[RMDB]
RNA sequence: GGGAACGACUCGAGUAGAGUCGAAAAGGGGGUGUGGCUGCGGCGAUACGUACUACCUCAGGAAGGAUCUACACCGGGAUCAGUAUCGAUGUUUCCUGUGGGAUCGGCUUCUGUGCCGAGCAUGCCGGUACUUAUCUCCGUUCGCGGAGAUAAGUACAAAAGAAACAACAACAACAAC
Reactivity to 2A3 in 0.01 (KOAc 150mM, MgCl2 10mM, bicine 150mM(pH8.5), 24C), signal-to-noise 3, nucleotides 027 to 126: g060g000g000g000g000u050g000u050g060g040c060u060g050c040g000g000c010g020a020u040a140c020g020u020a100c020u060a020c000c010u020c020a000g000g010a020a010g020g020a020u000c000u060a070c020a020c070c090g050g050g040a100u100c030a030g030u080a060u190c090g040a040u060g300u120u020u010c010c000u020g000u060g020g020g010a020u040c050g030g020c040u110u060c050u180g140u120g010c010c000g000a020g000c010a020u120g030c000c020g040
Reactivity to DMS in 0.01 (KOAc 150mM, MgCl2 10mM, bicine 150mM(pH8.5), 24C), signal-to-noise 3, nucleotides 027 to 126: g000g010g010g010g020u010g030u000g010g000c060u000g000c040g020g010c020g000a090u000a070c120g020u010a070c100u000a150c030c030u010c020a070g010g010a020a010g020g000a030u000c020u010a070c070a040c060c080g000g000g010a060u000c070a090g010u000a070u010c160g000a050u000g000u000u000u000c000c000u010g000u000g000g010g000a070u000c030g010g000c000u000u010c140u000g010u010g000c000c000g010a070g000c080a050u010g020c040c020g000